An RNA of 177 nucleotides, treated with DMS and 2A3 and read out base by base.
[RMDB]
RNA sequence: GGGAACGACUCGAGUAGAGUCGAAAAGAUAUGGAGAGAACUACAGCUAAGCUGAUGACCUUAAUCGGAAACGAUUAAGCAAGGAACGCGCUGCUCUCCUAAGUCAAAACUCACCUUCGGGUGAGAAGUGACAUAAAUUCUUCGGAAUUUAUGUCACAAAAGAAACAACAACAACAAC
Reactivity to DMS in 0.01 (KOAc 150mM, MgCl2 10mM, bicine 150mM(pH8.5), 24C), signal-to-noise 4, nucleotides 027 to 126: g010a030u000a280u010g000g000a030g000a000g000a130a070c130u030a280c000a010g010c020u000a130a190g010c020u010g020a070u010g010a170c300c020u010u010a000a000u000c000g010g010a090a070a120c010g010a010u000u000a000a000g000c060a040a060g000g020a030a070c130g020c150g000c010u000g000c010u000c000u000c010c010u020a020a090g000u000c010a080a040a120a150c000u000c000a000c000c000u000u010c210g050g010g000u000g000a000g010a020a050
Reactivity to 2A3 in 0.01 (KOAc 150mM, MgCl2 10mM, bicine 150mM(pH8.5), 24C), signal-to-noise 5, nucleotides 027 to 126: g000a000u020a020u080g000g010a000g010a030g010a160a080c140u180a060c240a000g020c040u210a300a050g010c020u180g110a300u210g030a120c000c020u000u000a010a000u000c000g000g000a020a020a010c010g010a010u010u000a000a010g000c040a050a160g140g030a280a110c070g000c010g000c070u010g010c000u010c000u010c020c000u000a040a000g000u000c010a000a000a060a240c000u000c000a000c000c010u060u080c300g160g000g010u010g000a000g010a010a020

The 2A3 profile rests on 9,333 reads. Values are in units of 0.01, from 0 to 300, in steps of 10. The data come from the RNA Mapping Database (RMDB), library TTRDEL. Conditions: 150 mM KOAc, 10 mM MgCl2 and 150 mM bicine (pH 8.5), 24 C.